This 177-nucleotide RNA was probed chemically with 2A3 and DMS. Values cover nucleotides 27 to 126. The reactions ran in a buffer of 150 mM KOAc, 10 mM MgCl2 and 150 mM bicine (pH 8.5), at 24 C. For 2A3 the reverse transcriptase was SuperScript II with manganese. DMS adducts were read by reverse transcription with MarathonRT.
RNA sequence: GGGAACGACUCGAGUAGAGUCGAAAAGUGCUUUUCCAUUGCCGCGCCUGUGUCCCAGAUGAAGUGGCGCACGCCGCCGGCCAGAUGGUGCAGCAGCGCCCAGGUGUAACCGAACAGGAUGAGGCGACUAGGCUCAUCCAUUCGUGGAUGAGCCUAGAAAAGAAACAACAACAACAAC
Reactivity to 2A3 in 0.01 (KOAc 150mM, MgCl2 10mM, bicine 150mM(pH8.5), 24C), signal-to-noise 5, nucleotides 027 to 126: g060u050g040c010u040u030u040u000c030c040a130u010u140g020c000c000g020c010g020c010c000u070g030u020g030u090c000c020c010a020g050a090u250g080a130a050g050u120g120g000c000g020c010a010c060g030c020c020g020c010c010g060g010c030c010a090g050a300u180g060g000u060g010c070a060g020c010a010g020c030g010c000c000c020a020g020g000u100g040u080a080a070c020c010g010a050a020c020a030g050g010a090u050g030a030g030g010c010g010a010
Reactivity to DMS in 0.01 (KOAc 150mM, MgCl2 10mM, bicine 150mM(pH8.5), 24C), signal-to-noise 8, nucleotides 027 to 126: g010u010g010c050u000u000u010u010c050c090a170u000u000g010c020c010g010c040g010c020c010u010g020u000g010u000c030c010c010a190g000a150u010g010a130a100g010u010g020g010c010g010c020a040c080g010c030c040g010c020c070g010g010c060c200a100g000a100u000g000g020u000g010c050a110g020c030a160g000c030g010c020c010c030a080g000g020u000g010u010a070a090c060c040g000a110a120c070a050g000g010a070u000g010a120g000g000c020g010a140